[RMDB]
RNA sequence: GGGAACGACUCGAGUAGAGUCGAAAACUGGCCUCAUUGUGAAAGCAGGAAAGAUAAGAAAGCCUUGUGCAAACUGUGGAAAAGGGUACACCCGUUCGAGAGGAAGUACCUCACCCUGUUCUACGGCCAACAAUGAACUCAGAACGGUAAGAAUAGCAACUACACUUAUCUUCGGAUAAGUGUAGUUAAAAGAAACAACAACAACAAC
Reactivity to 2A3 in 0.01 (KOAc 150mM, MgCl2 10mM, bicine 150mM(pH8.5), 24C), signal-to-noise 4, nucleotides 027 to 156: c040u030g030g010c000c000u030c010a040u020u080g010u030g090a100a040a010g020c020a000g050g030a080a070a040g070a200u240a200a060g110a160a020a020g030c000c020u140u170g050u050g020c030a060a030a080c050u050g000u050g040g050a060a040a030a040g020g000g020u050a050c040a040c050c000c060g030u060u090c080g010a040g010a010g070g020a130a030g100u050a110c000c000u010c000a020c010c000c000u010g040u020u010c000u040a020c000g010g010c020c010a010a000c010a000a040u050g000a040a020c050u040c130a040g020a010a000c010g040g050u120a090a000g040a060a050u190a120g090c040
Reactivity to DMS in 0.01 (KOAc 150mM, MgCl2 10mM, bicine 150mM(pH8.5), 24C), signal-to-noise 2, nucleotides 027 to 156: c080u000g010g000c070c060u000c020a080u000u010g010u000g010a170a120a180g000c030a090g010g020a100a110a110g010a260u010a090a130g010a120a130a140g000c010c010u000u020g030u010g010c050a070a110a040c010u000g010u000g010g000a030a080a030a030g010g010g010u000a090c090a300c100c030c020g000u000u000c040g020a200g020a070g040g010a060a030g020u010a110c020c010u000c050a100c020c040c000u000g000u000u000c000u010a030c010g000g040c030c030a040a030c040a000a060u000g020a030a030c050u020c010a070g010a020a070c050g040g000u000a030a070g000a080a080u000a160g000c080
Structure probing data (2A3 and DMS) for a 207-nucleotide construct. DMS adducts were read by reverse transcription with MarathonRT. The RNA was probed in 150 mM KOAc, 10 mM MgCl2 and 150 mM bicine (pH 8.5) at 24 C. It was measured as part of the RMDB library OK3TST. Values cover nucleotides 27 to 156.